Chemical mapping of a 177-nucleotide RNA with 2A3 and DMS.
The reactions ran in a buffer of 150 mM KOAc, 10 mM MgCl2 and 150 mM bicine (pH 8.5), at 24 C.
Values cover nucleotides 27 to 126.
For 2A3, 897 sequencing reads were counted.

[RMDB]
RNA sequence: GGGAACGACUCGAGUAGAGUCGAAAAUGCAGCACCUUAUGCAACGUGGUUAAGGUCACCACUCCGGGAAUAAAGUCCUCGGUCAGCUUCGGCAUCUCUUGUGAAACCCUAUCUAACAGCUGCUGGGUACUCCGCGAUUAUUCGUAAUCGCGGAGUAAAAAGAAACAACAACAACAAC
Reactivity to 2A3 in 0.01 (KOAc 150mM, MgCl2 10mM, bicine 150mM(pH8.5), 24C), signal-to-noise 1, nucleotides 027 to 126: u100g020c020a000g000c000a040c050c000u170u120a130u170g020c030a100a100c100g020u020g020g060u070u080a180a060g070g020u080c040a030c030c010a010c000u050c030c010g000g060g000a000a000u140a160a170a030g090u090c000c010u010c030g000g010u050c060a000g000c000u070u030c040g000g030c020a080u020c010u010c000u040u070g010u050g030a130a080a090c010c000c040u040a080u090c060u030a010a050c030a030g080c020u000g040c020u020g040g020g000
Reactivity to DMS in 0.01 (KOAc 150mM, MgCl2 10mM, bicine 150mM(pH8.5), 24C), signal-to-noise 1, nucleotides 027 to 126: u010g030c010a000g000c080a090c030c040u010u000a060u010g010c020a050a130c150g000u010g000g000u000u000a060a110g020g000u010c150a110c050c040a040c040u000c080c040g000g000g050a090a080u000a100a110a100g000u000c040c010u000c030g010g020u040c110a090g030c030u010u000c060g020g010c020a020u010c060u010c030u000u010g000u010g010a110a050a140c040c000c000u000a060u010c050u020a060a060c080a170g030c040u000g010c010u000g000g040g040